Overview:
Structure probing data (DMS and 2A3) for a 177-nucleotide construct. For DMS the reverse transcriptase was MarathonRT. The reactions ran in a buffer of 150 mM KOAc, 10 mM MgCl2 and 150 mM bicine (pH 8.5), at 24 C. For DMS, 2,475 sequencing reads were counted.

[RMDB]
RNA sequence: GGGAACGACUCGAGUAGAGUCGAAAAAAAAGAUAUGGAGCAUGAACUACGCUGUUACAGCUUCAACAGCUCUUAUCGGAAACGAUAAGAGACAUGAAGAAGGUGGGCGCAUGCUCCUAAGUCAAAAUCUCAGAUAUUACUUCGGUAAUAUCUGAGAAAAAGAAACAACAACAACAAC
Reactivity to DMS in 0.01 (KOAc 150mM, MgCl2 10mM, bicine 150mM(pH8.5), 24C), signal-to-noise 3, nucleotides 027 to 126: a040a080a080a070g010a020u010a300u000g000g010a010g030c000a010u000g000a170a080c130u010a300c040g040c020u000g030u000u010a280c080a050g010c000u000u000c020a020a270c120a120g010c000u000c010u000u000a000u000c000g010g010a090a070a150c000g000a020u000a010a000g000a020g000a040c080a110u000g020a010a210g020a060a030g010g010u000g020g030g000c070g020c020a010u000g000c010u000c000c000u000a030a050g010u000c030a070a080a140a080
Reactivity to 2A3 in 0.01 (KOAc 150mM, MgCl2 10mM, bicine 150mM(pH8.5), 24C), signal-to-noise 2, nucleotides 027 to 126: a000a000a000a000g090a030u130a070u160g010g000a000g040c010a030u030g010a110a110c120u240a120c300g000c000u050g150u300u210a110c060a080g110c020u000u010c030a080a080c040a070g030c000u000c010u040u020a010u020c010g000g000a120a010a010c010g000a010u000a000a010g010a010g060a010c050a300u090g020a040a030g000a040a020g140g170u080g060g000g000c000g020c000a000u000g010c000u000c010c010u030a030a020g030u030c000a020a040a120a250